RNA sequence: GGGAACGACUCGAGUAGAGUCGAAAAGUAGACGUCUAUCUUCGGACCACUGCCAUCAUGCACGCCUAUCACGUCAACGAGGACUGUUCUACCAGUAUCGACUUUCUCGUGGAGGAUUAGAAGUGUGCCUGGAUAGAAAUUUCGAUUUCUAUCCAGGAAAAGAAACAACAACAACAAC
Reactivity to DMS in 0.01 (KOAc 150mM, MgCl2 10mM, bicine 150mM(pH8.5), 24C), signal-to-noise 8, nucleotides 027 to 126: g010u010a040g010a060c130g010u000c040u000a100u000c050u000u000c070g010g010a090c040c090a080c090u000g010c020c030a070u000c100a070u000g020c050a030c070g010c050c030u000a070u010c060a060c070g000u000c060a050a080c070g010a080g010g010a020c120u000g000u010u010c050u000a130c190c050a080g010u010a120u010c040g010a050c040u000u000u000c010u000c010g010u000g010g010a110g010g000a100u010u010a080g000a060a110g020u000g010u000g000
Reactivity to 2A3 in 0.01 (KOAc 150mM, MgCl2 10mM, bicine 150mM(pH8.5), 24C), signal-to-noise 8, nucleotides 027 to 126: g030u030a000g010a030c020g040u000c050u090a230u030c030u130u080c090g060g000a040c010c020a050c050u050g010c030c020a130u100c020a030u160g010c020a010c050g010c010c010u110a110u120c040a030c140g110u030c040a040a070c040g010a010g010g020a020c040u050g070u150u010c010u060a070c030c030a030g070u070a090u130c020g020a020c010u020u040u000c020u020c000g000u020g000g040a040g050g010a050u090u120a100g110a240a080g060u050g010u030g080
Source: RMDB library OK2TST, as collected in RNAgym.
Chemical mapping of a 177-nucleotide RNA with DMS and 2A3.
High DMS reactivity at an A or C suggests that its Watson-Crick edge is free.
The RNA was probed in 150 mM KOAc, 10 mM MgCl2 and 150 mM bicine (pH 8.5) at 24 C.
DMS adducts were read by reverse transcription with MarathonRT.